[RMDB]
RNA sequence: GGGAACGACUCGAGUAGAGUCGAAAAAUACACGUUCACAACUUUGGUCUUUUAUAUGUCCUACUGAAUUUGCACAAGCAAGCAUCUUUUUACCUCAAUACAACGAAUACAUAUAUAAUGCAUCAAUAGUCUUUUGUAGAAAUGCUAAAUAUGACACACUUUAGGUCAUCUUCGGAUGACCUAAAGUAAAAGAAACAACAACAACAAC
Reactivity to DMS in 0.01 (KOAc 150mM, MgCl2 10mM, bicine 150mM(pH8.5), 24C), signal-to-noise 1, nucleotides 027 to 156: a140u000a050c050a120c030g020u000u010c040a060c080a090a120c050u020u010u010g040g010u010c030u010u000u010u000a130u000a040u020g020u010c010c040u000a120c070u010g020a060a120u040u000u000g000c040a030c100a150a110g020c030a110a050g010c050a070u000c010u010u010u010u020u010a110c030c040u000c050a100a060u000a090c110a060a090c060g000a120a050u010a080c020a010u000a060u000a050u030a030a060u000g010c030a050u010c030a080a060u000a080g000u000c060u000u000u000u000g040u000a100g000a080a050a030u010g030c010u000a080a040a060u000a110u000g010a140c010a060c120
Reactivity to 2A3 in 0.01 (KOAc 150mM, MgCl2 10mM, bicine 150mM(pH8.5), 24C), signal-to-noise 4, nucleotides 027 to 156: a000u190a020c060a010c060g090u090u110c020a040c010a160a080c060u010u060u090g060g010u020c030u040u130u100u050a100u020a020u100g010u030c050c010u060a080c040u040g060a080a070u090u100u040g020c020a050c060a100a060g060c010a040a020g000c030a080u050c020u090u080u030u080u070a080c010c040u070c030a060a070u130a160c060a150a020c130g040a070a040u060a090c020a020u020a000u020a010u020a100a070u080g000c000a020u000c010a020a080u010a160g070u070c040u030u180u060u110g050u040a040g040a060a020a000u040g000c020u060a030a100a050u100a070u160g040a030c010a020c030
Source: RMDB library OK3TST, as collected in RNAgym.
The record gives the reactivity of an RNA of 207 nucleotides to DMS and 2A3.
The 2A3 profile rests on 1,770 reads.
2A3 adducts were read by reverse transcription with SuperScript II with manganese.
Conditions: 150 mM KOAc, 10 mM MgCl2 and 150 mM bicine (pH 8.5), 24 C.
For DMS the reverse transcriptase was MarathonRT.